[RMDB]
RNA sequence: GGGAACGACUCGAGUAGAGUCGAAAAAGGACUAUCAGUUAGUUGGUAGUGUAAUGGACUACCAAGACAGUGACGGUUGACGGGAAAUUAGGGUUUUGUACCGGAGAGGGAGCCUGAGAGAUUGCUCAGUCCUAAUCAGAUUCGUCUGAUUAGGACUAAAAGAAACAACAACAACAAC
Reactivity to DMS in 0.01 (KOAc 150mM, MgCl2 10mM, bicine 150mM(pH8.5), 24C), signal-to-noise 8, nucleotides 027 to 126: a080g010g010a060c030u000a080u020c040a080g000u010u010a110g020u010u000g000g010u010a010g000u000g020u010a130a090u030g000g000a040c000u000a010c010c010a010a030g010a030c060a120g010u000g010a060c060g010g010u010u010g010a100c110g000g000g000a050a060a090u010u020a100g010g010g000u000u010u020u010g010u020a070c060c030g000g000a080g010a120g000g010g000a060g000c060c030u000g000a070g000a090g000a130u020u010g000c030u010c080
Reactivity to 2A3 in 0.01 (KOAc 150mM, MgCl2 10mM, bicine 150mM(pH8.5), 24C), signal-to-noise 7, nucleotides 027 to 126: a010g080g010a010c040u040a050u100c040a040g060u050u120a020g010u020u070g000g000u000a000g000u010g020u040a060a070u090g020g010a000c000u000a000c000c000a010a000g020a010c010a040g060u020g060a020c020g020g040u030u070g060a030c020g000g020g040a060a070a070u140u120a110g050g020g020u040u010u080u180g080u070a080c030c020g020g020a070g020a030g040g040g000a010g010c020c010u070g030a060g000a010g020a100u060u100g040c010u020c060
This 177-nucleotide RNA was probed chemically with DMS and 2A3.
For 2A3 the reverse transcriptase was SuperScript II with manganese.
It was measured as part of the RMDB libraries RFM100 and RFMREP.
Conditions: 150 mM KOAc, 10 mM MgCl2 and 150 mM bicine (pH 8.5), 24 C.